[RMDB]
RNA sequence: GGGAACGACUCGAGUAGAGUCGAAAAGAUAUGGAUGCGCACAGGGAGCUGAUCGGAAACGAUUCAGCUUUGAUCUGUGGCGCAUCCUAAGUCAAAACGGGCACUAUCGUUCGCGAUAGUGCCCGAACGCAUAAUAUAGCUUCGGCUAUAUUAUGCGAAAAGAAACAACAACAACAAC
Reactivity to 2A3 in 0.01 (KOAc 150mM, MgCl2 10mM, bicine 150mM(pH8.5), 24C), signal-to-noise 2, nucleotides 027 to 126: g030a000u050a020u120g000g000a010u000g000c000g050c000a000c000a000g140g080g020a010g020c000u010g000a020u000c020g030g050a060a040a030c010g020a010u260u240c020a010g000c000u040u010u020g030a070u020c010u010g010u030g050g000c000g000c000a000u010c010c000u000a010a000g020u000c030a040a040a080a110c020g000g010g000c000a010c000u000a010u010c020g070u140u060c300g000c010g180a000u000a000g000u000g000c000c000c000g010a000a010
Reactivity to DMS in 0.01 (KOAc 150mM, MgCl2 10mM, bicine 150mM(pH8.5), 24C), signal-to-noise 3, nucleotides 027 to 126: g000a040u010a300u000g000g000a010u000g000c000g020c000a030c010a000g000g000g020a000g030c000u000g000a030u010c000g000g000a080a060a150c000g010a010u010u000c010a000g010c000u000u000u010g020a040u010c000u000g020u000g010g020c010g010c000a000u000c010c000u000a010a060g020u010c010a060a040a110a220c020g000g000g010c020a010c000u000a010u000c000g020u000u010c220g020c000g010a010u000a010g000u000g010c000c000c010g000a000a020
About this RNA
The record gives the reactivity of an RNA of 177 nucleotides to 2A3 and DMS. The reactions ran in a buffer of 150 mM KOAc, 10 mM MgCl2 and 150 mM bicine (pH 8.5), at 24 C. The DMS profile rests on 5,594 reads. High 2A3 reactivity points to a flexible backbone, as in loops and unpaired stretches.